Conditions: 150 mM KOAc, 10 mM MgCl2 and 150 mM bicine (pH 8.5), 24 C. Chemical mapping of a 177-nucleotide RNA with DMS and 2A3. It was measured as part of the RMDB library OK2TRN.

[RMDB]
RNA sequence: GGGAACGACUCGAGUAGAGUCGAAAACUGUCACCGCACAGACCAGCAGGUUGUGGUGGUUUAGAGCCUCUGCCUUGGAUGGGGAGAUAGUCACUGUAGGUUGCACUCGCCGCUGCAGGGUCGUGCCGGCCCUGCUGUAAUUCGUUACAGCAGGGCCAAAAGAAACAACAACAACAAC
Reactivity to DMS in 0.01 (KOAc 150mM, MgCl2 10mM, bicine 150mM(pH8.5), 24C), signal-to-noise 5, nucleotides 027 to 126: c060u000g010u010c070a080c100c090g000c060a070c100a100g010a080c030c030a140g010c100a080g000g020u000u010g020u010g010g020u000g000g010u000u000u010a060g010a160g010c050c020u000c030u000g000c050c050u000u010g020g010a130u010g020g000g000g010a060g000a080u000a080g000u000c070a080c060u000g000u010a100g010g010u010u000g010c070a100c080u000c040g010c020c020g020c040u000g000c060a130g010g010g000u000c020g010u000g000c040c100
Reactivity to 2A3 in 0.01 (KOAc 150mM, MgCl2 10mM, bicine 150mM(pH8.5), 24C), signal-to-noise 2, nucleotides 027 to 126: c030u040g050u110c030a020c130c040g070c030a030c020a050g100a090c030c010a020g110c040a010g130g000u070u100g020u140g050g020u040g020g030u060u130u130a090g010a020g050c000c010u000c000u040g070c000c030u120u100g170g040a120u100g030g040g050g000a040g020a050u160a050g060u070c020a010c070u090g120u190a050g060g090u060u050g020c010a020c000u020c030g100c020c000g040c050u010g000c030a060g000g080g000u020c010g020u020g010c000c000

The DMS profile rests on 5,969 reads. In probing experiments dimethyl sulfate is read out at A N1 and C N3, which are open when not base-paired.